[RMDB]
RNA sequence: GGGAACGACUCGAGUAGAGUCGAAAAUCUGCCAAGCUCACUUUUAAUCAUGAGAAAGAAAUUACCCACAUGGAGACAGCAGAAAAUGAGAAAGGAGAGAUCGUGCUGCGAAUAAUUCCAGCGAGUGUCUUCUCAUGGCUUUCGAGCCAUGAGAAGAAAAAGAAACAACAACAACAAC
Reactivity to 2A3 in 0.01 (KOAc 150mM, MgCl2 10mM, bicine 150mM(pH8.5), 24C), signal-to-noise 2, nucleotides 027 to 126: u060c030u000g040c060c020a040a050g000c000u000c000a050c020u160u000u030u240a100a120u300c140a120u120g040a000g040a130a050a000g130a000a200a030u070u030a060c000c010c000a000c000a070u030g000g000a010g000a000c000a000g040c070a000g020a000a030a010a020u130g000a050g010a070a000a000g060g040a010g000a000g040a070u000c060g080u100g160c000u000g060c170g000a020a010u200a110a090u130u000c000c000a010g040c000g080a030g030u120g060
Reactivity to DMS in 0.01 (KOAc 150mM, MgCl2 10mM, bicine 150mM(pH8.5), 24C), signal-to-noise 1, nucleotides 027 to 126: u020c030u030g010c000c010a090a070g000c000u000c000a090c060u000u000u020u020a030a110u040c080a070u000g000a130g000a030a060a050g000a130a100a070u010u040a170c020c000c050a050c010a020u000g000g040a050g010a090c120a070g030c130a070g020a000a130a040a070u000g090a100g000a000a040a010g000g050a070g080a010g000a060u000c000g030u010g000c020u000g010c110g000a000a030u010a050a080u020u000c000c010a000g000c050g020a030g000u050g010
This 177-nucleotide RNA was probed chemically with 2A3 and DMS. Source: RMDB library RFM100, as collected in RNAgym. Conditions: 150 mM KOAc, 10 mM MgCl2 and 150 mM bicine (pH 8.5), 24 C.